[RMDB]
RNA sequence: GGGAACGACUCGAGUAGAGUCGAAAAGAUAUGGACGUACGGAGCUUUUGACGUGGGUCGGAAACGACCUAACGAUAAGCUCGUACGUCCUAAGUCAAAGACGAAAUAGGUUCGCCUAUUUCGUCAAUCUUUUUAACUCGUUCGCGAGUUAAAAAGAAAAAGAAACAACAACAACAAC
Reactivity to 2A3 in 0.01 (KOAc 150mM, MgCl2 10mM, bicine 150mM(pH8.5), 24C), signal-to-noise 2, nucleotides 027 to 126: g020a010u040a040u080g000g000a000c000g020u020a000c120g170g110a050g040c040u100u130u250u190g120a080c000g010u000g020g000g010u000c000g000g000a020a030a020c000g000a010c020c000u000a090a010c000g040a050u050a150a030g000c000u000c000g010u000a000c000g000u000c010c000u000a000a000g000u000c020a100a130a000g010a000c010g010a000a000a000u000a000g040g030u050u090c270g180c010c000u000a010u000u000u010c000g000u000c000a000a000
Reactivity to DMS in 0.01 (KOAc 150mM, MgCl2 10mM, bicine 150mM(pH8.5), 24C), signal-to-noise 3, nucleotides 027 to 126: g000a030u000a270u000g000g000a020c010g000u010a000c000g030g020a020g020c010u000u010u000u000g010a220c070g010u000g010g000g010u000c000g010g000a070a060a120c000g000a000c000c000u000a010a020c000g010a100u010a020a000g020c010u000c010g000u000a000c000g030u000c000c000u000a000a040g010u000c040a150a100a120g000a020c000g000a000a010a000u010a000g000g000u000u010c250g020c000c000u000a010u000u000u000c000g020u000c000a020a030
Annotation: The data come from the RNA Mapping Database (RMDB), library TTRDEL. This 177-nucleotide RNA was probed chemically with 2A3 and DMS. DMS adducts were read by reverse transcription with MarathonRT. The RNA was probed in 150 mM KOAc, 10 mM MgCl2 and 150 mM bicine (pH 8.5) at 24 C. The DMS profile rests on 3,443 reads. Reactivities are given for positions 27 through 126. 2A3 adducts were read by reverse transcription with SuperScript II with manganese.